An RNA of 207 nucleotides, treated with 2A3 and DMS and read out base by base.
The data come from the RNA Mapping Database (RMDB), library M2RFPK.
2A3 adducts were read by reverse transcription with SuperScript II with manganese.
For DMS the reverse transcriptase was MarathonRT.
2A3 is a SHAPE reagent: it acylates the 2'-hydroxyl of flexible nucleotides of all four kinds.
[RMDB]
RNA sequence: GGGAACGACUCGAGUAGAGUCGAAAACAGAGCUGAUGGGCCAUGUACCUAUCCAAAAUGAGAUCCCAUCUUGCACACUGUGCUGAUUUGAGAUUCUCAUGCCUCCUACUUGGAGAGAUCUGGACUACUAACUGUAUGACGUUCGCGUCAUACAGAAGCUCUCAUAGUUGUUCGCAACUAUGAGAGCAAAAGAAACAACAACAACAAC
Reactivity to 2A3 in 0.01 (KOAc 150mM, MgCl2 10mM, bicine 150mM(pH8.5), 24C), signal-to-noise 7, nucleotides 027 to 156: c010a010g030a000g030c050u070g020a020u020g000g000g000c080c060a170u200g050u110a100c010c020u030a040u030c040c030a100a060a010a080u020g000a010g000a030u030c000c020c010a000u010c030u060u170g000c010a020c020a070c110u280g000u010g000c010u040g040a120u050u150u100g100a130g010a060u280u030c000u000c000a020u050g020c000c000u010c010c000u140a290c090u120u260g010g000a010g010a010g010a030u020c020u050g020g050a030c050u090a030c020u050a280a080c000u020g000u000a000u000g000a010c000g020u020u020c160g020c010g070u010c000a000u000a000c000a000g000a000a000
Reactivity to DMS in 0.01 (KOAc 150mM, MgCl2 10mM, bicine 150mM(pH8.5), 24C), signal-to-noise 2, nucleotides 027 to 156: c020a060g000a090g020c010u000g000a070u010g020g030g010c030c050a140u000g040u000a020c000c020u010a060u000c000c060a040a040a110a120u000g000a070g000a040u000c000c000c010a030u000c080u000u020g000c010a030c020a230c120u010g010u000g030c030u020g040a030u000u000u000g010a010g000a000u000u000c010u000c010a020u000g020c040c010u000c000c010u020a120c070u000u000g000g020a050g000a110g020a040u000c040u010g040g000a150c050u000a160c300u000a100a240c000u000g000u000a000u000g010a040c000g030u000u000c300g040c000g020u000c010a000u000a010c000a010g000a050a080